[RMDB]
RNA sequence: GGGAACGACUCGAGUAGAGUCGAAAAGAUAUGGAGGCACAUUUCUCGAUAAGAAUGAUUCGGAAACGAAUUAAUUCUUUUGACGAGACCAUGCCUCCUAAGUCAAAAGAUGAGCUUCGGCUCAUCAGGUAUAUUCAGUGUUCGCACUGAAUAUACCAAAAGAAACAACAACAACAAC
Reactivity to 2A3 in 0.01 (KOAc 150mM, MgCl2 10mM, bicine 150mM(pH8.5), 24C), signal-to-noise 7, nucleotides 027 to 126: g020a000u040a010u110g010g000a000g010g050c010a030c030a130u150u300u030c030u010c010g160a190u080a300a010g000a000a000u020g010a000u010u000c010g000g010a030a040a020c020g010a010a020u020u060a140a150u030u010c000u030u060u070u220g300a180c070g000a000g010a010c020c030a030u060g000c000c000u000c000c000u000a010a000g020u010c020a050a050a040a200g000a010u000g000a000g000c030u050u140c300g200g000c000u020c010a000u000c010a000
Reactivity to DMS in 0.01 (KOAc 150mM, MgCl2 10mM, bicine 150mM(pH8.5), 24C), signal-to-noise 7, nucleotides 027 to 126: g000a030u000a280u000g000g010a010g010g030c000a030c190a270u010u010u000c010u000c000g010a160u010a010a010g010a020a010u000g000a010u000u000c000g010g000a060a050a120c000g010a000a000u000u000a040a060u000u000c000u000u000u000u000g010a230c140g000a010g010a030c300c300a110u000g010c000c000u000c000c000u000a000a080g000u000c040a100a080a110a130g010a010u000g000a010g010c010u000u010c280g040g000c000u000c000a000u000c000a010